The record gives the reactivity of an RNA of 177 nucleotides to 2A3.
The reactions ran in a buffer of 150 mM KOAc, 10 mM MgCl2 and 150 mM bicine (pH 8.5), at 24 C.
The data come from the RNA Mapping Database (RMDB), libraries RFM100 and RFMREP.
For 2A3 the reverse transcriptase was SuperScript II with manganese.
RNA sequence: GGGAACGACUCGAGUAGAGUCGAAAAGUGCAGGGUGAGUGUGAGUGGACGCGUGAGUGUGUGAGUGUGCGCGCUUGGAGCGUGUUAGGCGAGUGCGUGCGCCCACCCCUGCGCCCCUCCUCCCGCUGUGGUAGAGUCUGUUCGCAGACUCUACCACAAAAGAAACAACAACAACAAC
Reactivity to 2A3 in 0.01 (KOAc 150mM, MgCl2 10mM, bicine 150mM(pH8.5), 24C), signal-to-noise 3, nucleotides 027 to 126: g080u070g040c040a020g020g000g080u120g050a260g050u140g050u050g010a040g020u240g000g050a060c090g000c040g010u030g030a120g010u130g020u040g000u010g060a090g050u040g000u010g000c000g000c010g000c000u030u050g130g040a140g060c070g010u130g130u220u140a050g060g010c000g000a000g010u010g000c000g000u000g030c000g000c020c010c010a000c010c000c000c000u000g000c010g000c010c000c000c000u020c000c000u000c000c020c000g020c040u050